[RMDB]
RNA sequence: GGGAACGACUCGAGUAGAGUCGAAAAAUUGUCUGACCUCAGUAGCUAUUAAAUAACAUCAAGUAACAUCUGUAUCAGGCCCUACAUAGAACAUACAGUUGAGUGGGAGUAAACAAAAAGAUAAACAUGCGUGUUAAUGGCUGUUCGAGAGAAAUCGCGAUCAGACAUCUUUCGAGAUGUCUGAUCGAAAAGAAACAACAACAACAAC
Reactivity to 2A3 in 0.01 (KOAc 150mM, MgCl2 10mM, bicine 150mM(pH8.5), 24C), signal-to-noise 1, nucleotides 027 to 156: a000u090u090g050u040c020u050g070a110c020c010u000c000a000g000u000a000g000c000u020a040u080u080a050a130a220u150a090a050c030a050u080c050a120a020g060u020a020a110c000a100u040c080u110g150u100a050u100c070a030g150g000c000c000c000u020a030c020a100u220a020g080a070a000c030a030u300a060c000a050g080u060u080g000a050g040u060g010g000g000a140g060u110a000a160a000c040a030a050a010a000a040g000a020u080a020a070a000c020a040u060g050c020g120u010g000u040u050a030a030u010g000g000c000u040g020u110u020c140g000a050g010a010g030a070a040a000u100c130g040

Source: RMDB library OK3TST, as collected in RNAgym. Structure probing data (2A3) for a 207-nucleotide construct. For 2A3 the reverse transcriptase was SuperScript II with manganese. The reactions ran in a buffer of 150 mM KOAc, 10 mM MgCl2 and 150 mM bicine (pH 8.5), at 24 C. For 2A3, 425 sequencing reads were counted.